Chemical mapping of a 177-nucleotide RNA with DMS and 2A3.
The DMS profile rests on 5,216 reads.
The RNA was probed in 150 mM KOAc, 10 mM MgCl2 and 150 mM bicine (pH 8.5) at 24 C.
For 2A3, 1,612 sequencing reads were counted.
For 2A3 the reverse transcriptase was SuperScript II with manganese.
RNA sequence: GGGAACGACUCGAGUAGAGUCGAAAAGUCAUACUGGGGGUUCAUGUAGGUAUCUUUAAAGCAGUGUUUCUGACAGUACGGCUGUCUAAUCACCCUGCAUUGUUGAGACCCUGAGAAAGCCAGCCUACUAAAUAAGAGGGUUCGCCCUCUUAUUUAGAAAAGAAACAACAACAACAAC
Reactivity to DMS in 0.01 (KOAc 150mM, MgCl2 10mM, bicine 150mM(pH8.5), 24C), signal-to-noise 5, nucleotides 027 to 126: g010u010c090a070u000a180c040u000g000g010g010g010g000u010u000c050a070u010g010u010a030g010g000u000a080u000c040u000u010u010a060a050a120g030c100a050g010u000g010u000u000u000c170u010g000a030c040a030g010u000a100c240g020g000c010u000g010u000c020u000a040a080u000c090a040c070c060c040u000g010c030a080u000u000g010u010u000g000a100g000a050c140c020c000u010g010a070g000a050a080a130g000c050c030a040g000c030c020u000a160
Reactivity to 2A3 in 0.01 (KOAc 150mM, MgCl2 10mM, bicine 150mM(pH8.5), 24C), signal-to-noise 2, nucleotides 027 to 126: g030u050c020a060u090a150c050u040g000g030g000g010g010u030u040c020a030u100g020u040a010g070g020u020a080u050c030u020u200u150a060a040a030g020c020a000g030u000g030u060u040u060c070u070g020a020c010a010g000u050a030c120g150g000c080u010g000u000c020u010a010a060u060c000a020c000c030c000u000g000c000a010u040u100g030u020u000g010a030g030a070c010c010c010u000g020a010g040a020a030a000g050c000c020a000g040c020c000u060a110